[RMDB]
RNA sequence: GGGAACGACUCGAGUAGAGUCGAAAAGUUGCUGUCUGGUAUUAUUCGACAGCUUGUAAUAGUAUCCGUAUAUGCCUACCCUACGCAACUGGGCGUACUCCUUGCAAUGGACUUUUUACAGUUCCUACUGGCAUGGAAAUUUCGAUUUCCAUGCCAGAAAAGAAACAACAACAACAAC
Reactivity to DMS in 0.01 (KOAc 150mM, MgCl2 10mM, bicine 150mM(pH8.5), 24C), signal-to-noise 2, nucleotides 027 to 126: g000u010u000g040c000u000g000u000c020u020g010g010u000a080u030u000a090u040u010c060g000a030c100a030g010c060u000u000g000u010a050a020u000a060g020u010a100u000c010c030g000u000a100u010a140u020g010c010c010u010a060c090c040c000u000a070c110g010c100a060a050c140u000g000g000g010c060g000u000a050c110u000c040c090u000u000g000c040a080a030u000g010g010a090c020u000u000u000u000u000a040c180a100g000u000u000c010c010u000a180
Reactivity to 2A3 in 0.01 (KOAc 150mM, MgCl2 10mM, bicine 150mM(pH8.5), 24C), signal-to-noise 5, nucleotides 027 to 126: g030u030u040g000c000u010g010u020c040u060g090g000u170a170u240u060a130u110u290c020g010a020c020a020g000c000u000u020g030u020a030a040u010a070g050u050a060u040c010c010g050u050a080u000a010u110g010c000c000u080a140c000c020c030u030a030c070g010c040a040a090c100u070g020g020g010c010g000u020a060c010u020c020c030u040u060g010c020a030a070u060g050g010a020c000u030u070u050u030u060a060c060a050g000u000u040c010c000u030a080

Structure probing data (DMS and 2A3) for a 177-nucleotide construct. It was measured as part of the RMDB libraries RFM100 and RFMREP.